[RMDB]
RNA sequence: GGGAACGACUCGAGUAGAGUCGAAAAGACGUCAUGCGUACCAUGGAUCUAGACACAUGUGAUCAUCGAUCCAUCAUGAUCUAGACGUACGAUCGAUCGUACCGUGAUCGAGUGUACUAUAUGCGUAGAUCAGUGUUGCGUUCGCGCAACACUGAUCAAAAGAAACAACAACAACAAC
Reactivity to DMS in 0.01 (KOAc 150mM, MgCl2 10mM, bicine 150mM(pH8.5), 24C), signal-to-noise 3, nucleotides 027 to 126: g000a080c040g040u040c070a040u010g050c250g000u010a060c090c090a140u000g000g000a090u000c000u000a220g000a060c060a000c140a110u000g020u000g010a080u000c010a100u000c190g010a010u000c010c040a050u000c120a120u030g010a140u000c010u000a050g010a080c170g000u000a000c020g000a050u000c140g010a070u000c020g040u000a130c180c130g020u000g010a020u000c010g020a080g010u020g010u010a010c010u010a130u010a060u000g010c040g000u010a060
Reactivity to 2A3 in 0.01 (KOAc 150mM, MgCl2 10mM, bicine 150mM(pH8.5), 24C), signal-to-noise 3, nucleotides 027 to 126: g100a020c020g030u120c060a030u110g050c000g020u030a030c000c040a060u070g050g030a090u000c020u020a030g010a010c030a030c020a160u090g100u110g100a150u080c040a100u170c120g000a010u000c050c010a030u040c030a000u070g030a020u030c000u000a050g020a060c060g020u040a020c010g020a050u070c060g040a070u050c010g030u090a100c060c020g090u110g000a020u030c020g010a010g010u150g010u020a040c060u010a030u010a030u260g070c060g030u030a030